[RMDB]
RNA sequence: GGGAACGACUCGAGUAGAGUCGAAAACAAGCACUUGAGUGUAGAAGGGGACUGCGUGACCAUUCGUUUCCGCGGGAAGGAUCGUGUGGAACACGAGUUCAUGGUACGCAACGGUGAGCGGCUGUAUUCGCCGCUGAGGAACCUACACAUGCCAGAGAUUACGACUAUUCUUCGGAAUAGUCGUAAUAAAAGAAACAACAACAACAAC
Reactivity to DMS in 0.01 (KOAc 150mM, MgCl2 10mM, bicine 150mM(pH8.5), 24C), signal-to-noise 4, nucleotides 027 to 156: c080a100a150g030c030a100c040u000u020g020a190g020u010g010u000a040g010a170a110g000g000g020g020a120c070u010g020c000g020u010g010a300c020c020a090u000u000c010g010u000u010u000c000c010g020c020g030g000g010a200a170g010g020a110u000c010g000u010g020u000g030g000a050a300c110a030c020g010a070g020u010u010c080a070u010g030g030u000a070c030g010c020a050a060c040g010g020u020g000a040g020c020g020g020c020u000g020u000a180u000u010c140g010c000c000g000c010u010g010a060g000g000a130a070c060c010u010a090c050a050c030a090u000g000c040c030a150g000a160g010
Reactivity to 2A3 in 0.01 (KOAc 150mM, MgCl2 10mM, bicine 150mM(pH8.5), 24C), signal-to-noise 7, nucleotides 027 to 156: c030a010a020g070c050a040c090u140u200g070a050g060u030g010u040a030g030a150a050g010g030g010g020a010c030u030g010c030g020u020g120a050c000c000a010u020u020c010g020u010u050u010c020c010g010c060g040g040g060a100a100g130g040a110u090c120g140u120g020u070g060g010a020a030c030a010c110g010a010g020u080u130c050a020u020g020g000u020a010c020g010c020a060a010c050g030g040u110g060a010g010c000g020g000c020u080g050u240a220u070u140c060g000c000c000g000c010u010g000a030g030g020a010a010c000c000u020a010c010a010c010a040u110g050c010c020a090g020a010g000